[RMDB]
An RNA of 177 nucleotides, treated with 2A3 and DMS and read out base by base.
The data come from the RNA Mapping Database (RMDB), library OK2TRN.
The DMS profile rests on 1,232 reads.
The RNA was probed in 150 mM KOAc, 10 mM MgCl2 and 150 mM bicine (pH 8.5) at 24 C.

RNA sequence: GGGAACGACUCGAGUAGAGUCGAAAACAGGCCGCCGGUGCCGUGGUGCUUGGUGAUCACCGACGAGCCGUCGGCAGCGAUCUCGGCCAGCGGGAAGCCGGCGUGAGUGAGGUCGCCUAUCUCGGUGGGGCACAAAGUCAUUCGUGACUUUGUGCCCAAAAGAAACAACAACAACAAC
Reactivity to 2A3 in 0.01 (KOAc 150mM, MgCl2 10mM, bicine 150mM(pH8.5), 24C), signal-to-noise 1, nucleotides 027 to 126: c040a000g100g000c030c010g010c030c020g060g010u070g130c160c010g000u000g020g110u140g030c020u210u280g170g110u180g190a050u020c000a010c040c000g090a020c000g020a050g110c070c050g020u000c010g000g020c000a000g050c030g020a010u020c000u020c020g050g030c000c010a030g000c000g000g000g150a180a070g030c000c000g010g000c000g040u060g000a010g100u180g020a020g000g020u000c020g000c010c000u130a150u070c040u020c020g030g160u110g000
Reactivity to DMS in 0.01 (KOAc 150mM, MgCl2 10mM, bicine 150mM(pH8.5), 24C), signal-to-noise 2, nucleotides 027 to 126: c150a120g010g030c040c000g030c050c000g010g000u010g030c060c010g030u010g010g090u020g000c050u010u010g000g040u010g020a070u000c010a090c000c000g020a010c010g010a300g020c150c060g000u010c020g000g030c090a110g000c180g000a020u000c000u000c020g000g000c020c020a300g010c000g000g050g000a170a210g020c000c010g010g000c010g000u000g000a160g000u000g000a040g000g000u000c010g030c000c030u000a060u020c040u010c000g000g010u000g030